[RMDB]
RNA sequence: GGGAACGACUCGAGUAGAGUCGAAAAGAUAUGAUAAAUGUCAUAUUGUCAAGACUAUUGUAGAGCUUAUUAGCCAGAUUCGUAGUCAUUGUGUCUACAGUCAGAUUUAUCUCUUAUCUUUAUUACCAGUUUCCAACAAUCCCCGAUAUCAGAAAAAAGGUCAUAGGAUAUUCGUAUCCUAUGACCUAAAAGAAACAACAACAACAAC
Reactivity to 2A3 in 0.01 (KOAc 150mM, MgCl2 10mM, bicine 150mM(pH8.5), 24C), signal-to-noise 2, nucleotides 027 to 156: g020a000u030a000u050g000a000u010a040a100a020u110g010u050c020a020u050a050u120u060g050u030c010a010a040g000a010c010u010a040u150u110g100u090a040g000a010g060c020u070u090a070u070u150a210g020c010c010a030g030a130u050u070c050g030u060a000g020u010c070a130u020u150g030u030g020u030c020u020a030c030a010g000u010c000a000g030a070u000u010u050a030u020c030u010c020u120u030a040u010c020u030u150u040a110u090u050a090c030c000a020g010u010u050u030c030c000a030a030c030a050a090u050c010c010c030c000g070a010u090a020u230c040a000g000a140a040a090a090a010
Reactivity to DMS in 0.01 (KOAc 150mM, MgCl2 10mM, bicine 150mM(pH8.5), 24C), signal-to-noise 1, nucleotides 027 to 156: g010a010u000a040u010g010a030u000a020a060a150u010g020u010c030a160u000a050u000u010g000u010c090a040a210g000a020c030u010a030u010u000g000u010a110g000a130g000c030u010u020a090u010u010a070g020c050c010a130g030a140u000u000c110g040u010a090g070u000c020a180u010u020g050u020g040u000c010u010a070c060a050g040u000c040a130g000a060u000u000u010a070u000c000u000c130u000u000a040u000c020u010u000u000a140u040u000a030c000c030a110g030u000u000u030c010c020a020a070c140a130a150u030c020c040c000c060g030a100u000a060u000c030a060g010a000a040a120a150a160